[RMDB]
RNA sequence: GGGAACGACUCGAGUAGAGUCGAAAACGGAUUGGGAUAACAAGAAGAAAGGAAAAAUUGGGCGCAAUUGGAAUGACUCAUUGGGUGCUUAUGUGUAUUCAAUUGAAGGUAGAUUCUAUAAUAUUACUGAAGAUAUCGACAAUUAUGCACAGAUUCACUAUUUAUUAUCGUUCGCGAUAAUAAAUAGAAAAGAAACAACAACAACAAC
Reactivity to DMS in 0.01 (KOAc 150mM, MgCl2 10mM, bicine 150mM(pH8.5), 24C), signal-to-noise 4, nucleotides 027 to 156: c050g010g000a100u000u000g020g030g030a120u010a080a130c060a060a130g000a080a130g010a070a080a120g020g010a050a070a060a090a130u000u010g010g010g020c030g010c040a030a110u000u010g010g010a110a090u000g000a140c060u010c040a120u010u000g010g010g040u000g000c040u000u010a080u010g030u000g000u000a020u000u000c110a020a030u010u000g010a060a300g010g010u010a040g000a280u000u010c010u000a070u000a060a160u000a130u000u000a050c040u000g010a030a020g000a220u000a010u010c010g010a300c010a020a030u000u010a060u010g000c000a020c030a000g040a200u000u010c060a160
Reactivity to 2A3 in 0.01 (KOAc 150mM, MgCl2 10mM, bicine 150mM(pH8.5), 24C), signal-to-noise 8, nucleotides 027 to 156: c050g020g040a060u080u090g040g000g010a040u070a200a050c070a050a040g060a050a010g030a060a090a050g010g010a050a100a020a050a060u100u080g020g010g000c020g010c040a010a050u080u070g030g030a060a050u070g020a040c010u020c060a040u040u060g040g010g020u050g030c040u130u120a070u080g020u000g000u010a020u040u130c070a010a010u000u010g010a020a010g000g000u010a000g000a020u010u000c000u040a060u060a210a180u190a140u290u140a100c060u040g010a010a000g000a010u010a000u020c000g010a010c000a010a000u010u010a010u030g010c000a010c000a010g070a100u110u110c050a020